[RMDB]
RNA sequence: GGGAACGACUCGAGUAGAGUCGAAAAGUUACUAAUCUUCGGAUUAGUAACAAAUGCCAUCGUCGUCGAUCUCUAUCAACUACCCUUGCGACUAUGGCAAAAACCUCGAAGACUUCGGUCUUCGAGGCUACCUUAAUGAGUUCGCUCAUUAAGGUAGAAAAGAAACAACAACAACAAC
Reactivity to 2A3 in 0.01 (KOAc 150mM, MgCl2 10mM, bicine 150mM(pH8.5), 24C), signal-to-noise 6, nucleotides 027 to 126: g000u000u000a000c000u000a000a000u000c020u030u050c210g040g000a010u000u000a000g000u000a000a000c000a000a020a010u090g000c000c010a010u010c020g020u000c000g040u020c060g060a170u040c100u010c070u260a150u220c070a070a120c040u200a180c020c010c010u030u060g000c000g000a010c000u010a000u010g000g000c010a020a000a000a020a020c000c010u000c010g000a000a000g000a000c010u050u110c300g070g000u000c000u000u000c000g000a000g000g000
Reactivity to DMS in 0.01 (KOAc 150mM, MgCl2 10mM, bicine 150mM(pH8.5), 24C), signal-to-noise 5, nucleotides 027 to 126: g010u000u000a000c000u000a000a000u000c000u000u010c230g020g000a010u000u000a000g010u000a000a000c000a060a070a110u010g010c000c000a010u000c070g010u000c020g040u010c140g000a040u010c110u010c080u010a170u010c100a070a100c150u010a160c040c020c020u000u000g010c020g010a030c010u010a010u000g000g010c010a020a030a050a070a140c000c000u000c000g010a010a010g000a020c000u000u010c170g030g000u000c000u000u000c000g010a000g000g000
The record gives the reactivity of an RNA of 177 nucleotides to 2A3 and DMS. In probing experiments dimethyl sulfate is read out at A N1 and C N3, which are open when not base-paired. 2A3 adducts were read by reverse transcription with SuperScript II with manganese. It was measured as part of the RMDB library RFMREP.